Structure probing data (2A3 and DMS) for a 177-nucleotide construct. DMS (dimethyl sulfate) methylates the pairing face of unpaired adenines and cytosines.
[RMDB]
RNA sequence: GGGAACGACUCGAGUAGAGUCGAAAAAUCAUUCGAGUGAGCACAAAGAGUAGCAUAAGCUCUCCUUUGACAUCUUCACCAACCUCUCAUCGUUCCCUUCUCUGUAAUAACGUCGUUUUGCAAAACUGCAUUAGAGAUAGUUCGCUAUCUCUAAUGCAAAAGAAACAACAACAACAAC
Reactivity to 2A3 in 0.01 (KOAc 150mM, MgCl2 10mM, bicine 150mM(pH8.5), 24C), signal-to-noise 1, nucleotides 027 to 126: a000u090c010a040u050u060c030g020a040g020u000g000a000g000c030a010c020a050a020a010g040a020g060u200a020g030c050a080u050a300a040g020c020u000c000u000c010c030u010u000u010g030a080c020a080u030c020u100u040c020a010c020c000a060a040c000c000u000c000u000c000a000u000c020g010u000u030c010c000c000u030u050c030u000c000u030g030u000a040a060u080a150a000c060g130u010c010g010u050u030u060u130g090c030a010a040a030a140c050u000
Reactivity to DMS in 0.01 (KOAc 150mM, MgCl2 10mM, bicine 150mM(pH8.5), 24C), signal-to-noise 1, nucleotides 027 to 126: a060u020c130a090u000u010c030g040a150g030u000g040a040g010c260a130c050a030a060a070g000a040g050u010a050g000c030a150u000a080a200g010c000u000c030u000c060c050u000u000u000g010a120c080a060u010c030u000u000c000a020c050c080a060a160c050c000u010c050u010c030a080u000c010g000u000u030c000c000c000u000u010c000u000c050u000g010u000a120a050u020a040a050c150g010u000c020g040u010u000u000u010g030c020a060a060a100a080c170u000